[RMDB]
RNA sequence: GGGAACGACUCGAGUAGAGUCGAAAAUCAUAUGAUCGGGCAAGACUAUGUAGCAGCAACGAGCCACUAUGUCGCAGCAACAGCCAUAGCGGACCUUCGGGAUAGAUCAUCAAUGUACUGGAUGCAACCUGGCUAAAUCAUUCGUGAUUUAGCCAGGAAAAGAAACAACAACAACAAC
Reactivity to 2A3 in 0.01 (KOAc 150mM, MgCl2 10mM, bicine 150mM(pH8.5), 24C), signal-to-noise 2, nucleotides 027 to 126: u050c020a020u080a090u300g040a040u040c030g020g040g050c080a070a060g050a100c040u050a040u230g060u160a010g030c030a000g000c040a090a060c040g050a040g070c060c000a000c000u020a050u150g190u170c070g000c030a030g030c010a080a070c000a100g000c030c010a010u040a000g000c010g060g010a070c030c000u090u020c040g070g010g020a050u050a030g030a050u040c000a020u060c050a070a090u090g080u090a050c060u080g130g020a050u050g030c010a030a070
Reactivity to DMS in 0.01 (KOAc 150mM, MgCl2 10mM, bicine 150mM(pH8.5), 24C), signal-to-noise 2, nucleotides 027 to 126: u020c000a110u000a060u010g000a100u000c060g020g010g030c020a060a070g010a130c040u000a080u000g000u000a110g000c010a110g000c070a100a080c030g000a090g010c030c040a020c010u010a070u000g030u010c120g000c040a070g020c080a090a070c150a060g000c060c000a020u000a060g030c060g010g000a080c050c010u010u000c110g010g000g000a110u010a060g000a040u000c030a030u000c070a050a070u010g010u000a060c100u020g000g000a100u010g020c180a080a160